Chemical mapping of a 177-nucleotide RNA with 2A3 and DMS. The RNA was probed in 150 mM KOAc, 10 mM MgCl2 and 150 mM bicine (pH 8.5) at 24 C. It was measured as part of the RMDB libraries RFM100 and RFMREP. 2A3 adducts were read by reverse transcription with SuperScript II with manganese.
RNA sequence: GGGAACGACUCGAGUAGAGUCGAAAAGAAAGAAAGAGAUAGUAAUAAGAAAGAUGAGCUCAUUGUAAUAUGAGCUUCAUUUAUACAUUUCAUAUUACCAUUAGCUCAUCUUUUUUAUUACUACCAACUAAGAAAAAUAGUUCGCUAUUUUUCUUAGAAAAGAAACAACAACAACAAC
Reactivity to 2A3 in 0.01 (KOAc 150mM, MgCl2 10mM, bicine 150mM(pH8.5), 24C), signal-to-noise 2, nucleotides 027 to 126: g040a010a070a020g070a050a100a010g090a000g010a030u020a010g000u000a000a000u000a000a000g000a000a000a000g000a000u000g000a000g000c000u000c010a000u000u010g000u000a000a000u000a000u000g000a000g000c000u030u010c010a010u000u070u090a150u030a050c040a040u090u090u020c000a000u000a000u000u000a000c000c000a000u000u000a000g000c000u000c000a000u000c000u020u000u000u000u000u000a000u000u000a010c000u000a020c000c000a000a020
Reactivity to DMS in 0.01 (KOAc 150mM, MgCl2 10mM, bicine 150mM(pH8.5), 24C), signal-to-noise 3, nucleotides 027 to 126: g010a110a110a080g010a100a080a120g000a160g010a100u000a010g000u000a000a010u000a000a000g000a000a010a010g000a010u000g000a000g010c000u000c080a010u000u000g010u010a020a010u000a000u000g000a010g000c300u020u020c100a040u040u030u030a150u030a150c150a080u020u010u000c000a020u000a000u000u000a000c000c050a000u000u000a020g010c000u000c000a000u000c000u000u000u000u000u010u000a010u000u000a010c000u000a000c040c030a080a190